RNA sequence: GGGAACGACUCGAGUAGAGUCGAAAAUCGGGGGCGUAAUGCCCUCAGCUGAUUCUCAAACUCUGAACAGGUGAGUCAUAUUAAUUCUCUUUAUUGGAUUUUGGUAUUAAAUGAUGCAUGCAUCAUGCGUAGGGGACGAAUUCGUUCGUCCCCUACGAAAAGAAACAACAACAACAAC
Reactivity to 2A3 in 0.01 (KOAc 150mM, MgCl2 10mM, bicine 150mM(pH8.5), 24C), signal-to-noise 4, nucleotides 027 to 126: u110c010g000g000g000g010g000c020g050u190a070a040u300g010c000c000c000u000c000a000g010c010u060g030a030u020u020c040u020c000a090a070a050c020u040c020u130g070a100a040c010a090g030g090u100g040a020g020u010c050a030u060a110u220u160a100a020u070u000c060u020c000u080u150u160a240u060u180g040g000a130u090u100u060u040g100g010u130a140u130u200a140a130a060u060g000a000u010g000c070a070u090g020c000a000u010c010a020u080g010
Reactivity to DMS in 0.01 (KOAc 150mM, MgCl2 10mM, bicine 150mM(pH8.5), 24C), signal-to-noise 3, nucleotides 027 to 126: u030c160g010g000g010g010g030c030g020u060a100a080u080g000c030c000c000u000c000a010g000c130u010g000a120u000u000c000u000c020a120a100a110c040u010c010u010g010a070a110c120a130g010g010u010g000a020g000u000c100a060u020a030u040u050a070a110u000u000c010u000c050u040u010u000a170u040u000g000g000a160u010u050u020u000g020g000u050a080u010u020a060a070a020u000g020a020u000g010c040a130u000g000c010a040u000c010a040u030g000
Background:
An RNA of 177 nucleotides, treated with 2A3 and DMS and read out base by base. Source: RMDB libraries RFM100 and RFMREP, as collected in RNAgym. Values cover nucleotides 27 to 126.